[RMDB]
The data come from the RNA Mapping Database (RMDB), library OK3TST. This 207-nucleotide RNA was probed chemically with 2A3. Reactivities are given for positions 27 through 156. Conditions: 150 mM KOAc, 10 mM MgCl2 and 150 mM bicine (pH 8.5), 24 C.
RNA sequence: GGGAACGACUCGAGUAGAGUCGAAAAAAGGCCACCAUUGUGACCACACCCACAUGGGUCUGCAAAGGUGGUGGGCAGGGCUGCCUCCAGCAUCUGUGGCGAGAAGGCUGGGAGGUAGAGGCAGAAAGGAAGGUAACCACUGCAAGCGGUUGCAAAAGUAUUAUGGCUCAUUCGUGAGCCAUAAUACAAAAGAAACAACAACAACAAC
Reactivity to 2A3 in 0.01 (KOAc 150mM, MgCl2 10mM, bicine 150mM(pH8.5), 24C), signal-to-noise 2, nucleotides 027 to 156: a000a000g090g000c030c000a000c010c020a050u030u050g040u050g010a010c020c010a110c030a050c160c080c000a120c030a140u230g040g020g000u040c060u110g030c010a000a050a070g000g010u000g000g000u040g000g030g010c070a140g000g030g010c010u020g000c010c010u000c000c000a010g000c000a010u050c010u040g060u140g060g040c110g020a010g000a100a020g060g000c000u010g040g040g100a030g000g010u030a030g000a050g020g000c020a000g030a050a020a010g060g020a010a010g000g000u030a070a020c020c000a070c100u130g050c030a000a160g090c010g050g030u040u010g020c010a020a070a010a090